The data come from the RNA Mapping Database (RMDB), library OK1LIB. An RNA of 177 nucleotides, treated with DMS and 2A3 and read out base by base. DMS (dimethyl sulfate) methylates the pairing face of unpaired adenines and cytosines. DMS adducts were read by reverse transcription with MarathonRT. For DMS, 2,776 sequencing reads were counted. The reactions ran in a buffer of 150 mM KOAc, 10 mM MgCl2 and 150 mM bicine (pH 8.5), at 24 C.
RNA sequence: GGGAACGACUCGAGUAGAGUCGAAAAGGGAUACACCCCGUGUACAGAAAUGAUGUGCAAACAAACGGUAGUGGCAGAUUUGUUCUCCCACAAGUGUCGGCUUCUCCUUGUGGGUGGAAGUGGAUGCCGAUCGGUAGGAGUUCGCUCCUACCGAUCGAAAAGAAACAACAACAACAAC
Reactivity to DMS in 0.01 (KOAc 150mM, MgCl2 10mM, bicine 150mM(pH8.5), 24C), signal-to-noise 2, nucleotides 027 to 126: g000g000g010a190u020a070c150a110c010c020c030c030g000u000g000u000a030c050a040g040a210a060a080u010g020a010u010g020u030g000c050a010a110a040c180a030a150a050c060g010g000u020a040g010u000g000g010c040a050g000a170u060u000u030g010u010u000c020u000c060c020c050a000c050a020a020g010u000g000u030c060g020g000c100u020u000c000u000c040c000u020u000g010u040g010g020g000u000g010g010a040a070g010u010g000g000a160u010g020c040
Reactivity to 2A3 in 0.01 (KOAc 150mM, MgCl2 10mM, bicine 150mM(pH8.5), 24C), signal-to-noise 3, nucleotides 027 to 126: g060g030g020a030u040a140c020a070c010c000c000c000g040u020g000u000a030c060a010g100a080a170a070u120g080a070u070g080u040g020c040a050a080a110c000a040a090a000c080g000g040u140a110g050u080g050g000c020a020g050a150u060u070u180g100u070u000c020u000c000c020c000a000c000a000a050g040u030g110u230c030g050g010c030u010u000c020u000c010c010u040u070g020u070g040g000g030u090g050g000a020a000g070u070g030g000a020u070g000c000